[RMDB]
RNA sequence: GGGAACGACUCGAGUAGAGUCGAAAAAUCAUACUGGUGAUUAUAAAAGUUCCUAGGAGGCUAGAAGAGCCAACCAACAGAGAAGGGAAAGCAGUCUGUUCUGAACAUAGGGACAUAAGUUCAUUCAUUUACUAAAGUACUUCGGUACUUUAGUAAAAAAAGAAACAACAACAACAAC
Reactivity to 2A3 in 0.01 (KOAc 150mM, MgCl2 10mM, bicine 150mM(pH8.5), 24C), signal-to-noise 8, nucleotides 027 to 126: a000u030c020a020u090a170c110u150g120g030u020g030a030u020u080a080u090a180a150a030a040g020u010u000c000c000u010a040g020g060a040g030g000c020u090a040g080a210a030g040a170g040c000c020a020a080c030c010a020a050c010a030g050a000g030a090a090g070g000g010a040a050a010g040c030a010g060u000c020u010g030u080u030c030u060g030a050a010c020a100u100a060g010g000g020a000c020a030u160a080a050g040u030u040c020a020u090u020c010a020
Reactivity to DMS in 0.01 (KOAc 150mM, MgCl2 10mM, bicine 150mM(pH8.5), 24C), signal-to-noise 8, nucleotides 027 to 126: a040u000c010a040u010a100c180u020g020g020u000g000a050u010u010a080u020a060a110a140a140g000u000u000c000c000u010a080g010g020a300g010g000c040u010a080g020a140a080g000a060g000c010c010a090a110c060c070a080a090c130a050g010a080g010a100a080g010g010g010a050a050a080g000c090a050g000u010c040u010g010u010u000c050u010g000a060a060c130a090u010a080g000g000g010a050c060a060u020a060a090g000u010u000c070a060u030u030c090a100